Notes
Structure probing data (DMS and 2A3) for a 177-nucleotide construct. For 2A3 the reverse transcriptase was SuperScript II with manganese. For DMS the reverse transcriptase was MarathonRT. The data come from the RNA Mapping Database (RMDB), library OK2TRN.
RNA sequence: GGGAACGACUCGAGUAGAGUCGAAAACAAACCGAAACCAUCAUGGACGAGGCACCAUGCGCUCCGGAGGACUUCCUAGCGGAGGAAUCCCAGCAACACACUGCGAGGAGUGAAGCUGACAUUGAUGGUGGGGUAGUGAGUUCGCUCACUACCCCACAAAAGAAACAACAACAACAAC
Reactivity to DMS in 0.01 (KOAc 150mM, MgCl2 10mM, bicine 150mM(pH8.5), 24C), signal-to-noise 1, nucleotides 027 to 126: c120a070a220a090c060c060g020a050a110a050c000c000a030u010c030a010u000g010g000a180c180g010a060g020g000c000a150c180c240a160u000g000c170g010c000u000c000c090g020g000a020g000g000a300c060u020u000c000c000u000a140g030c190g000g000a070g000g080a060a170u000c000c010c030a030g000c030a030a160c180a050c110a250c100u000g010c250g000a130g000g000a000g010u000g000a000a200g000c000u000g000a010c110a040u000u010g000a010u000g000
Reactivity to 2A3 in 0.01 (KOAc 150mM, MgCl2 10mM, bicine 150mM(pH8.5), 24C), signal-to-noise 1, nucleotides 027 to 126: c020a070a070a060c010c020g040a080a030a010c010c000a000u020c030a020u040g070g060a040c090g050a120g040g000c020a030c050c090a110u110g020c070g030c010u040c010c020g020g000a040g000g050a080c020u040u080c020c000u060a090g030c050g110g030a020g000g000a000a000u000c000c010c000a000g020c020a040a040c060a030c040a040c150u100g060c020g070a050g040g010a060g000u040g010a010a010g020c000u030g000a050c010a040u070u140g020a020u050g010